[RMDB]
RNA sequence: GGGAACGACUCGAGUAGAGUCGAAAAGGAGAUCGAAGACGACCGACGUCAGCACGGUCGGGAUGUAGGUCCGCAUGCAUCCCAGUUGACGAAACUUGACGAUUUCCAAAGCGGACAAGAAGUCAAAGCCCUGACUAAAUUUCGAUUUAGUCAGGGCAAAAGAAACAACAACAACAAC
Reactivity to DMS in 0.01 (KOAc 150mM, MgCl2 10mM, bicine 150mM(pH8.5), 24C), signal-to-noise 1, nucleotides 027 to 126: g040g010a030g010a000u000c000g000a140a090g000a050c150g010a020c060c050g000a020c010g030u000c130a160g000c120a140c140g030g010u050c130g000g000g020a000u000g020u000a070g020g000u040c000c020g000c000a040u000g000c030a030u040c000c010c000a100g000u000u000g010a030c090g000a090a040a030c140u000u000g000a290c090g000a000u000u030u000c000c000a030a070a120g000c000g000g000a000c000a160a000g000a030a180g030u000c020a020a210a220
Reactivity to 2A3 in 0.01 (KOAc 150mM, MgCl2 10mM, bicine 150mM(pH8.5), 24C), signal-to-noise 2, nucleotides 027 to 126: g010g010a010g000a010u010c020g030a070a000g100a120c030g070a060c020c010g110a150c050g130u170c070a040g050c130a050c070g000g080u050c000g020g000g000a000u000g000u000a000g000g000u000c000c000g000c000a000u000g000c000a000u000c000c000c000a000g000u040u020g040a050c140g060a120a040a050c030u020u010g040a050c010g000a010u030u000u000c010c000a160a000a020g010c000g000g000a000c000a000a080g150a060a010g160u250c140a030a020a030

The data come from the RNA Mapping Database (RMDB), library OK1LIB. An RNA of 177 nucleotides, treated with DMS and 2A3 and read out base by base. DMS adducts were read by reverse transcription with MarathonRT. For 2A3 the reverse transcriptase was SuperScript II with manganese. Values cover nucleotides 27 to 126.